Conditions: 150 mM KOAc, 10 mM MgCl2 and 150 mM bicine (pH 8.5), 24 C. Structure probing data (DMS and 2A3) for a 177-nucleotide construct. For 2A3, 3,935 sequencing reads were counted. It was measured as part of the RMDB library RFMREP. DMS adducts were read by reverse transcription with MarathonRT. Reactivities are rounded to 0.1 and cut off at 0 and 3.
RNA sequence: GGGAACGACUCGAGUAGAGUCGAAAAGGAAGUGUAUUCUGUGAUUGUUCUGUACAUUGAUCGAUAUUCAGGUAACUGCAUCUGCUUAUCAGAUCUGUUCAGAGCCGACCCUCCGUCACACCUUUGUCGUCAUAAUAUGGUUCGCCAUAUUAUGACGAAAAGAAACAACAACAACAAC
Reactivity to DMS in 0.01 (KOAc 150mM, MgCl2 10mM, bicine 150mM(pH8.5), 24C), signal-to-noise 2, nucleotides 027 to 126: g030g020a070a070g020u000g000u020a060u000u010c090u000g010u020g010a060u010u000g020u010u000c010u000g000u010a020c020a050u010u010g010a010u000c000g000a010u000a010u000u000c000a000g010g000u000a070a170c300u000g030c240a020u000c000u000g020c030u020u000a000u000c000a080g020a010u000c000u010g010u000u000c000a000g000a050g000c020c180g000a090c050c030c010u000c020c030g000u010c000a020c050a090c200c040u000u000u000g020u000
Reactivity to 2A3 in 0.01 (KOAc 150mM, MgCl2 10mM, bicine 150mM(pH8.5), 24C), signal-to-noise 3, nucleotides 027 to 126: g050g020a040a140g090u100g050u230a190u170u090c090u070g040u010g050a060u060u050g020u030u010c010u000g010u010a010c000a050u060u200g000a020u010c010g000a000u010a010u000u000c000a000g000g030u030a150a110c120u240g030c080a030u000c000u010g000c010u000u010a000u010c030a080g010a000u000c010u010g010u020u010c000a000g000a010g000c010c030g100a140c020c010c000u000c010c030g030u020c010a010c000a020c040c000u070u080u100g300u080